This 207-nucleotide RNA was probed chemically with 2A3. For 2A3 the reverse transcriptase was SuperScript II with manganese. The reactions ran in a buffer of 150 mM KOAc, 10 mM MgCl2 and 150 mM bicine (pH 8.5), at 24 C.
[RMDB]
RNA sequence: GGGAACGACUCGAGUAGAGUCGAAAAUACCAUCGUUUCGACGAUGGUAAAAAAAACCUUUGUGUAGUUUGCGCUCGAUAAGCGUACCCAUUGGGUAACGCUUUUGACGAGCGGAACUACACUCUGGUAAAAACUGCCUCGAUUCGUCGAGGCAGAAUCCUAAAGCAUGGUUCGCCAUGCUUUAGGAAAAAGAAACAACAACAACAAC
Reactivity to 2A3 in 0.01 (KOAc 150mM, MgCl2 10mM, bicine 150mM(pH8.5), 24C), signal-to-noise 1, nucleotides 027 to 156: u080a000c010c000a000u000c000g000u010u020u160c250g110a030c000g000a000u000g000g030u010a010a000a000a000a000a000a000a010c000c020u020u000u010g000u000g010u000a040g010u020u030u080g300c010g010c000u000c010g050a060u000a080a000g000c000g010u000a000c000c000c040a230u090u300g040g030g000u030a160a040c000g040c020u020u060u070u140g160a120c000g010a000g010c030g000g010a000a000c000u000a000c000a000c000u020c000u000g010g000u060a210a090a000a000a000c000u000g000c010c000u000c000g010a010u060u030c140g020u000c000g240a000g000g030c000a000g000a000a030